[RMDB]
The data come from the RNA Mapping Database (RMDB), library OK3TST. Structure probing data (DMS and 2A3) for a 207-nucleotide construct. The RNA was probed in 150 mM KOAc, 10 mM MgCl2 and 150 mM bicine (pH 8.5) at 24 C. Reactivities are rounded to 0.1 and cut off at 0 and 3. The 2A3 profile rests on 3,244 reads.

RNA sequence: GGGAACGACUCGAGUAGAGUCGAAAAGUGGACGUUCGUCAAAAUCUACCGUCGCCAAGGACUCUCGAUAUCGGUCCGGUAGUAGAGCCGAAGAACGUCAGUGUUCGCGAUGUCCUUGAUGGUCUGCGGAUCGUACUCAGAACGGGCAUCAUCGAUGCCUCUGUCAAAAGUUCGCUUUUGACAGAGGAAAAGAAACAACAACAACAAC
Reactivity to DMS in 0.01 (KOAc 150mM, MgCl2 10mM, bicine 150mM(pH8.5), 24C), signal-to-noise 2, nucleotides 027 to 156: g000u000g020g010a020c000g030u000u000c020g000u010c040a060a090a120a130u000c020u000a030c020c050g000u010c100g030c080c060a160a160g020g020a060c010u000c020u000c090g020a160u000a140u010c120g020g000u000c030c010g000g000u000a060g010u010a050g010a080g010c140c190g000a070a060g000a030a010c010g000u000c000a130g010u000g000u000u000c080g020c070g010a140u000g040u000c000c000u010u000g020a130u000g010g010u000c010u010g050c130g070g010a110u010c050g010u010a110c080u010c040a130g030a140a070c130g000g020g000c000a010u000c050a070u000c020g000a190u000g010
Reactivity to 2A3 in 0.01 (KOAc 150mM, MgCl2 10mM, bicine 150mM(pH8.5), 24C), signal-to-noise 5, nucleotides 027 to 156: g300u190g020g010a000c010g000u000u000c000g060u060c070a080a100a010a160u000c010u020a010c040c030g200u200c100g040c050c010a110a120g030g010a090c050u080c030u060c230g160a150u130a140u300c110g000g000u000c010c000g000g000u010a020g000u010a010g010a020g050c040c080g040a040a050g010a010a000c020g000u000c020a000g040u020g030u010u060c020g000c020g040a000u030g000u010c010c000u040u080g020a060u100g030g020u010c020u020g050c160g120g000a020u030c020g030u060a110c050u020c110a010g040a150a050c080g000g010g000c000a010u010c010a010u080c000g010a020u090g040